[RMDB]
RNA sequence: GGGAACGACUCGAGUAGAGUCGAAAAAUAUCACCGCUUUCCAUACGUGUUCUCAAGAUAGAAAUAACUAGUCCUCAAGUAAGAAGGCUUGACAGCACCACUUGUUAAAUAUAGUUUAUCCUAAAUUCACCUGGUAAGUGGGGUGGCCAUCUGUGGACCACCCCUGCAUAUUCGUAUGCAGGGGUGGAAAAGAAACAACAACAACAAC
Reactivity to 2A3 in 0.01 (KOAc 150mM, MgCl2 10mM, bicine 150mM(pH8.5), 24C), signal-to-noise 3, nucleotides 027 to 156: a010u150a020u080c050a050c080c000g000c020u030u050u010c020c020a030u050a160c070g020u000g040u120u010c050u000c070a060a050g040a060u100a040g090a020a090a030u110a050a030c040u020a010g050u120c010c040u020c030a040a040g020u050a080a130g070a080a010g090g000c000u020u070g060a030c040a040g010c020a050c020c010a010c010u010u050g030u100u080a060a190a140u120a030u050a120g020u030u070u020a070u080c010c010u050a060a060a090u050u030c010a010c000c040u030g010g010u070a060a030g020u050g040g060g000g040u030g050g000c030c010a070u100c060u100g050u070g060g020a020
Reactivity to DMS in 0.01 (KOAc 150mM, MgCl2 10mM, bicine 150mM(pH8.5), 24C), signal-to-noise 1, nucleotides 027 to 156: a170u000a090u010c000a090c020c010g070c030u020u000u000c030c000a120u010a060c080g000u010g030u010u010c020u000c030a120a130g020a150u010a090g010a130a070a130u000a110a060c040u010a030g010u010c040c040u000c000a070a100g040u000a060a140g010a120a160g040g030c000u010u000g010a120c090a110g000c060a020c090c080a030c010u010u010g000u000u020a070a080a060u000a070u000a090g030u000u000u000a060u030c030c010u000a060a080a120u000u010c030a050c040c050u030g000g020u000a060a060g040u000g000g020g000g030u000g020g010c020c010a100u010c030u010g000u010g010g020a210

This 207-nucleotide RNA was probed chemically with 2A3 and DMS. DMS adducts were read by reverse transcription with MarathonRT.